Chemical mapping of a 177-nucleotide RNA with 2A3. The reactions ran in a buffer of 150 mM KOAc, 10 mM MgCl2 and 150 mM bicine (pH 8.5), at 24 C. The 2A3 profile rests on 1,137 reads.
RNA sequence: GGGAACGACUCGAGUAGAGUCGAAAAUAACAAAAACAAACACGCGAACCUGGCAAGGGCCGGUCAGCCAGGAGCGUGAUAAACGGUCAAAGAAGACCGGCCCGGCUGAAGAAAAACUUCAGCCAAACGCACUGGUCGAGUUCGCUCGAUCAGUGCGAAAAGAAACAACAACAACAAC
Reactivity to 2A3 in 0.01 (KOAc 150mM, MgCl2 10mM, bicine 150mM(pH8.5), 24C), signal-to-noise 1, nucleotides 027 to 126: u110a050a070c170a070a130a080a030a030c070a030a160a040c000a040c020g000c000g010a070a140c000c000u000g000g020c020a090a090g020g020g000c010c020g020g000u020c010a020g000c030c000a020g000g000a020g000c000g000u000g000a000u060a000a030a000c060g090g000u070c030a000a040a040g120a140a000g000a070c000c000g000g000c000c000c000g050g000c020u000g000a000a000g040a000a080a030a110a120c000u000u020c000a000g000c000c000a010a000a000